The record gives the reactivity of an RNA of 177 nucleotides to DMS and 2A3. The data come from the RNA Mapping Database (RMDB), library OK2TRN.

RNA sequence: GGGAACGACUCGAGUAGAGUCGAAAAAAGAACAUUACUACGUAAGUAUUGAUAUUGGAUCAUCAAGCGUAAAAACAAUAGUAGGCGAGAAAUUUCACAAUGGUAUAAAUGUGAUAGGUACAGGACAACAUCUAACUCUGUUCGCAGAGUUAGAUGUAAAAGAAACAACAACAACAAC
Reactivity to DMS in 0.01 (KOAc 150mM, MgCl2 10mM, bicine 150mM(pH8.5), 24C), signal-to-noise 3, nucleotides 027 to 126: a050a080g010a130a090c110a060u000u000a080c050u000a080c120g000u010a090a190g010u000a060u010u000g000a060u000a080u030u010g020g020a070u000c060a050u000c050a030a170g010c070g020u010a030a050a030a080a080c120a070a060u000a050g020u000a050g020g010c070g000a140g010a070a060a070u000u000u000c030a010c020a060a080u020g020g010u010a100u000a070a070a060u000g010u000g000a050u000a030g030g010u000a050c090a060g000g000a070c160a060
Reactivity to 2A3 in 0.01 (KOAc 150mM, MgCl2 10mM, bicine 150mM(pH8.5), 24C), signal-to-noise 2, nucleotides 027 to 126: a000a020g100a030a000c040a070u110u070a030c040u040a020c040g070u030a050a180g040u050a110u130u090g040a010u030a030u140u250g130g040a030u050c020a000u010c030a030a100g060c000g020u030a210a000a000a000a000c010a010a010u010a040g080u010a000g040g050c040g020a050g050a060a160a030u050u090u020c050a030c040a030a090u070g030g020u200a140u050a190a100a030u080g000u000g030a030u060a080g060g000u060a030c020a040g010g100a000c010a020
Notes
For DMS the reverse transcriptase was MarathonRT. The DMS profile rests on 2,588 reads. The reactions ran in a buffer of 150 mM KOAc, 10 mM MgCl2 and 150 mM bicine (pH 8.5), at 24 C.